[RMDB]
Background
An RNA of 177 nucleotides, treated with DMS and 2A3 and read out base by base. The DMS profile rests on 1,337 reads. High DMS reactivity at an A or C suggests that its Watson-Crick edge is free. Source: RMDB library OK2TRN, as collected in RNAgym.
RNA sequence: GGGAACGACUCGAGUAGAGUCGAAAAGGGCAACAUGGCAAAACCCUGUCUCUACGAAAAAUACAAAAAUCAGUCAGGUGUGGUGGUGCUUGCCUGUAGUCCCAGCUAUUUGAGAGGCUGAGGCAGGGCUGCACAUAGUGUUCGCACUAUGUGCAGCAAAAGAAACAACAACAACAAC
Reactivity to DMS in 0.01 (KOAc 150mM, MgCl2 10mM, bicine 150mM(pH8.5), 24C), signal-to-noise 2, nucleotides 027 to 126: g020g000g020c020a080a050c070a020u000g020g020c060a050a080a140a140c060c020c000u000g010u000c010u000c060u000a070c130g010a030a050a020a070a040u000a080c160a000a010a060a050a110u000c070a040g010u000c050a050g000g000u000g040u000g000g040u000g000g020u000g000c130u010u000g000c010c000u000g000u000a040g020u060c000c010c010a100g010c020u010a050u000u010u020g000a200g010a190g050g070c030u000g000a030g000g050c020a090g000g000
Reactivity to 2A3 in 0.01 (KOAc 150mM, MgCl2 10mM, bicine 150mM(pH8.5), 24C), signal-to-noise 1, nucleotides 027 to 126: g040g000g000c040a040a020c050a110u110g140g000c020a000a050a020a110c030c020c000u000g010u000c050u030c090u150a080c130g130a100a020a040a050a040u210a030c140a020a100a070a000a080u110c030a000g020u000c020a000g020g010u030g110u050g160g110u040g000g040u040g050c050u020u010g000c000c000u010g060u040a010g030u020c000c000c010a000g000c030u060a160u150u130u140g220a220g010a010g070g010c030u050g050a040g050g020c030a020g070g130
The 2A3 profile rests on 955 reads. For 2A3 the reverse transcriptase was SuperScript II with manganese.